[RMDB]
RNA sequence: GGGAACGACUCGAGUAGAGUCGAAAAGAAAGAAAGAAAGUUCAUUGUUUAUCGAAAACUUUAAACUAUAACCAUUCAAACUUUUCCAGAAGUUAGUUUGAAUAGAAAUUAAAAAGAAACUUCUGAAUGACCUUGGCACCGUUCGCGGUGCCAAGAAGAAUGAUGUUUACUUCGGUAAACAUCAUUCAAAAGAAACAACAACAACAAC
Reactivity to 2A3 in 0.01 (KOAc 150mM, MgCl2 10mM, bicine 150mM(pH8.5), 24C), signal-to-noise 1, nucleotides 027 to 156: g030a000a010a000g060a010a100a010g040a020a210a030g010u010u020c040a040u080u060g030u060u170u070a190u280c060g030a090a100a050a040c000u020u010u110a080a090a020c030u050a090u040a220a070c030c010a010u000u000c010a000a000a000c000u020u000u000u020c100c000a000g010a000a000g000u010u000a000g000u000u000u000g000a010a030u020a110g010a000a080a000u110u180a030a030a000a000a000g000a000a000a000c000u000u050c020u010g010a000a020u050g060a000c020c000u010u000g000g000c030a000c010c000g070u140u090c080g000c020g130g000u020g020c000c000a000a000g000a000a000